[RMDB]
RNA sequence: GGGAACGACUCGAGUAGAGUCGAAAACUUCACUUUCGAGUGAAGGUAAACCGUAGGCAUGGCAACAGGAGGAUCUCCGAAGAACUUCGAAAGAGGGGAGGAGAUCUACCCACCCUGAACCAUGCCUAAACGGGCUUGGGACCAAUUCGUUGGUCAAUGAUAAAACAACUUUCGAGUUGUUUUAUCAAAAAGAAACAACAACAACAAC
Reactivity to 2A3 in 0.01 (KOAc 150mM, MgCl2 10mM, bicine 150mM(pH8.5), 24C), signal-to-noise 2, nucleotides 027 to 156: c000u000u010c000a000c000u110u120u160c300g090a000g000u000g000a000a020g010g010u060a150a120a040c000c010g000u010a010g000g010c000a000u000g000g060c110a210a050c000a300g010g070a010g020g010a000u000c000u000c000c010g080a180a050g020a020a030c000u030u010c040g090a160a070a050g010a010g030g040g000g000a020g000g000a000g000a000u000c000u010a010c000c020c020a070c010c000c000u010g010a010a010c000c000a000u010g000c000c000u000a000a010a010c000g010g000g060c060u130u120g140g040g000a000c000c000a040a040u110u120c250g070u100u030g000g000u000c010a030a190
Reactivity to DMS in 0.01 (KOAc 150mM, MgCl2 10mM, bicine 150mM(pH8.5), 24C), signal-to-noise 2, nucleotides 027 to 156: c000u000u000c000a000c000u000u010u010c300g040a050g050u000g010a010a010g020g000u010a060a070a090c000c000g030u000a030g010g000c010a020u000g000g000c000a090a130c070a030g050g040a300g020g000a020u000c000u000c030c020g000a110a150g020a150a210c020u000u000c010g010a160a090a300g010a060g000g010g010g000a260g040g010a070g000a010u000c030u000a010c030c020c070a300c130c020c000u000g020a300a090c000c000a010u020g000c010c010u000a000a010a130c030g000g010g020c070u000u000g030g030g000a040c020c020a040a030u000u000c130g040u000u000g010g020u000c030a090a180
Conditions: 150 mM KOAc, 10 mM MgCl2 and 150 mM bicine (pH 8.5), 24 C. An RNA of 207 nucleotides, treated with 2A3 and DMS and read out base by base. Values cover nucleotides 27 to 156.